[RMDB]
RNA sequence: GGGAACGACUCGAGUAGAGUCGAAAAAGAAGAAGCAAUCUUGGAGAAGCUGGAAGAGAACUGACCCAAAGAAUCCAAGAGACUAAGACUGUGCAGGGUUGGGGAACGGAAGCUCACACAGGAGGCCUGGACAGAGCUGCAGCAGAGCCAGGAGAGACAUUAAAUGACUGUUCGCAGUCAUUUAAUGAAAAGAAACAACAACAACAAC
Reactivity to DMS in 0.01 (KOAc 150mM, MgCl2 10mM, bicine 150mM(pH8.5), 24C), signal-to-noise 2, nucleotides 027 to 156: a110g010a080a090g000a080a090g000c000a040a090u000c020u010u010g000g010a090g010a060a110g000c050u010g010g020a090a110g000a170g000a110a130c040u020g030a100c040c020c050a030a030a190g000a090a190u010c030c020a020a060g000a130g000a200c050u010a100a050g000a070c050u020g010u010g030c060a110g030g030g020u010u000g020g020g000g140a040a080c070g010g000a110a020g010c020u010c020a100c090a080c050a100g020g010a040g000g020c030c020u000g040g020a100c000a170g010a090g010c020u000g000c000a060g000c020a070g020a140g030c070c010a060g010g010a110g010a240g000a110
Reactivity to 2A3 in 0.01 (KOAc 150mM, MgCl2 10mM, bicine 150mM(pH8.5), 24C), signal-to-noise 3, nucleotides 027 to 156: a000g070a030a000g020a040a010g030c030a030a100u030c030u040u030g030g010a070g010a120a040g040c070u070g040g030a070a040g020a020g010a120a070c070u080g070a030c020c010c010a040a080a040g050a040a040u030c030c010a010a020g010a000g010a030c060u080a050a020g040a020c040u030g030u060g100c060a060g020g000g020u080u100g040g010g000g030a020a030c040g050g020a030a020g010c010u010c040a040c010a020c020a030g050g020a020g010g090c020c010u020g000g020a020c040a020g060a020g030c040u050g000c030a030g000c010a010g020a020g080c030c020a000g000g010a040g010a000g000a010
Structure probing data (DMS and 2A3) for a 207-nucleotide construct. The DMS profile rests on 2,734 reads.